Structure probing data (2A3) for a 207-nucleotide construct.
RNA sequence: GGGAACGACUCGAGUAGAGUCGAAAAAUUUACUGUUCCCAUGUUUCGUGGAGUACAGCAAAACCCAUUUGCAAAAGAGUUUCACAAUGAUGGACCUAUGUGUUUAAUCGGCGCAGGUGUUGGUAUUGCACCAUUUCGCGGAUUUGUGCAAAGGAGACUCGAUAUGGAGUUUCGACUCCAUAUCGAGAAAAGAAACAACAACAACAAC
Reactivity to 2A3 in 0.01 (KOAc 150mM, MgCl2 10mM, bicine 150mM(pH8.5), 24C), signal-to-noise 1, nucleotides 027 to 156: a000u090u160u160a060c030u030g000u030u070c000c000c020a020u040g100u000u090u070c040g020u030g010g040a210g060u040a050c010a000g000c080a040a030a050a110c060c000c000a090u070u030u140g020c060a140a000a070a070g130a030g100u080u150u120c060a030c010a110a090u170g050a060u070g070g080a060c050c000u020a040u060g050u020g060u060u130u160a020a010u010c020g060g020c010g000c120a100g010g030u020g010u020u050g040g180u130a140u100u300g000c010a000c000c010a010u060u030u010c050g000c040g030g000a000u040u110u070g040u000g000c010a010a040a060g050g030a080g010a050

For 2A3 the reverse transcriptase was SuperScript II with manganese. Values cover nucleotides 27 to 156. The reactions ran in a buffer of 150 mM KOAc, 10 mM MgCl2 and 150 mM bicine (pH 8.5), at 24 C. High 2A3 reactivity points to a flexible backbone, as in loops and unpaired stretches. It was measured as part of the RMDB library OK3TST.